An RNA of 177 nucleotides, treated with DMS and 2A3 and read out base by base. The reactions ran in a buffer of 150 mM KOAc, 10 mM MgCl2 and 150 mM bicine (pH 8.5), at 24 C. 2A3 adducts were read by reverse transcription with SuperScript II with manganese. DMS adducts were read by reverse transcription with MarathonRT. For DMS, 18,014 sequencing reads were counted.
[RMDB]
RNA sequence: GGGAACGACUCGAGUAGAGUCGAAAAGGCGAGAAGUUCCAGGAAAAGCGGUACAUCCAGGGAAUCGAUGUCCAGACCGUCGAGGGCGCGGGCGAUCUGUGUGAUCCCGGAGAACGACUCGAAGAUCGUAGUAUGAAACAUUCGUGUUUCAUACUACAAAAGAAACAACAACAACAAC
Reactivity to DMS in 0.01 (KOAc 150mM, MgCl2 10mM, bicine 150mM(pH8.5), 24C), signal-to-noise 9, nucleotides 027 to 126: g010g000c020g010a040g010a060a270g010u000u000c010c020a230g010g000a050a050a120a120g010c040g010g010u010a070c110a110u000c020c040a120g020g000g000a080a080u000c070g010a080u010g000u000c070c030a080g000a050c040c010g020u000c040g010a110g000g000g010c040g020c090g000g000g000c050g000a030u000c010u010g020u010g010u010g010a100u000c010c010c010g000g010a090g010a060a090c050g000a130c020u000c020g010a090a110g010a100u010c150
Reactivity to 2A3 in 0.01 (KOAc 150mM, MgCl2 10mM, bicine 150mM(pH8.5), 24C), signal-to-noise 9, nucleotides 027 to 126: g070g020c020g010a010g010a070a010g010u030u000c020c020a020g090g020a030a120a020a020g080c060g030g040u090a040c020a070u010c030c020a080g060g000g040a050a110u080c040g050a070u140g060u050c030c000a010g030a030c020c010g030u050c030g030a170g030g060g000c070g000c020g010g000g000c020g020a010u000c020u020g080u020g050u050g130a040u040c010c010c000g010g000a050g010a020a010c020g070a060c010u010c040g020a050a010g040a060u170c100